[RMDB]
RNA sequence: GGGAACGACUCGAGUAGAGUCGAAAAUCCCGGGCAGGACAGACCAGCCAGCUGGCUGUCCAUCAGGCUGGGCUGGAAGGACCUUGGAGAGACACUGCCCACUGGGGUCAAGGGGCACCCAGGGUAGCUAGUAUUGUUCCUUCGGGAACAAUACUAGAAAAGAAACAACAACAACAAC
Reactivity to 2A3 in 0.01 (KOAc 150mM, MgCl2 10mM, bicine 150mM(pH8.5), 24C), signal-to-noise 5, nucleotides 027 to 126: u000c000c000c000g000g000g000c050a060g000g020a060c000a030g070a160c010c000a010g020c010c010a030g100c030u030g050g000c030u100g090u100c010c000a010u050c010a000g080g000c010u050g020g060g050c010u010g020g060a090a030g070g050a040c010c010u070u100g070g020a110g000a000g000a050c020a010c090u020g010c000c010c000a030c030u040g000g000g000g030u040c060a180a160g110g010g020g000c050a150c010c010c010a010g000g010g000u040a030g040
Reactivity to DMS in 0.01 (KOAc 150mM, MgCl2 10mM, bicine 150mM(pH8.5), 24C), signal-to-noise 5, nucleotides 027 to 126: u000c000c000c020g010g010g000c030a090g000g000a150c030a040g000a100c010c000a010g000c030c060a110g000c050u000g000g020c160u010g010u020c040c020a040u010c060a110g000g000c020u000g010g010g000c020u010g000g000a130a100g000g000a070c030c040u000u020g010g000a140g010a120g010a120c170a110c040u000g010c000c000c010a150c070u010g010g010g000g020u000c040a140a070g010g010g010g010c080a120c030c010c010a030g000g000g010u010a060g020
The record gives the reactivity of an RNA of 177 nucleotides to 2A3 and DMS. High DMS reactivity at an A or C suggests that its Watson-Crick edge is free.